[RMDB]
The record gives the reactivity of an RNA of 177 nucleotides to 2A3 and DMS. Source: RMDB libraries RFM100 and RFMREP, as collected in RNAgym. 2A3 adducts were read by reverse transcription with SuperScript II with manganese.
RNA sequence: GGGAACGACUCGAGUAGAGUCGAAAACCUGGACUUCUGCGAUUGUCGCUUCCUUUUCCUGCCUCUGAGCUCGGGAGGGGUUUCCCGCCUCGCAGCCCCCGCCCCUGGACUUGCUUCUCCUCCUCCCAACACUUCAUUUAUUCGUAAAUGAAGUGUUAAAAGAAACAACAACAACAAC
Reactivity to 2A3 in 0.01 (KOAc 150mM, MgCl2 10mM, bicine 150mM(pH8.5), 24C), signal-to-noise 9, nucleotides 027 to 126: c010c010u020g080g040a030c030u080u050c030u130g030c020g100a130u070u120g040u060c020g030c080u030u050c010c000u040u040u040u030c010c010u030g030c010c000u050c040u070g050a040g020c020u030c050g010g020g010a050g010g020g010g010u010u060u040c010c010c000g030c010c010u020c020g040c020a030g000c000c000c000c000c000g020c010c000c000c000u010g010g010a030c010u030u070g020c000u040u030c010u010c010c000u000c000c000u000c000c000c000
Reactivity to DMS in 0.01 (KOAc 150mM, MgCl2 10mM, bicine 150mM(pH8.5), 24C), signal-to-noise 9, nucleotides 027 to 126: c080c050u010g010g010a070c040u010u020c020u000g010c030g000a160u010u000g010u010c040g010c120u000u000c020c000u000u010u010u020c030c020u010g010c030c020u000c040u000g000a100g010c030u000c090g000g010g010a110g010g000g000g010u000u010u000c020c010c020g010c070c030u000c050g010c070a090g010c020c010c020c020c050g000c030c020c020c020u010g000g000a070c060u010u010g010c050u000u000c030u000c010c000u000c020c020u000c000c000c050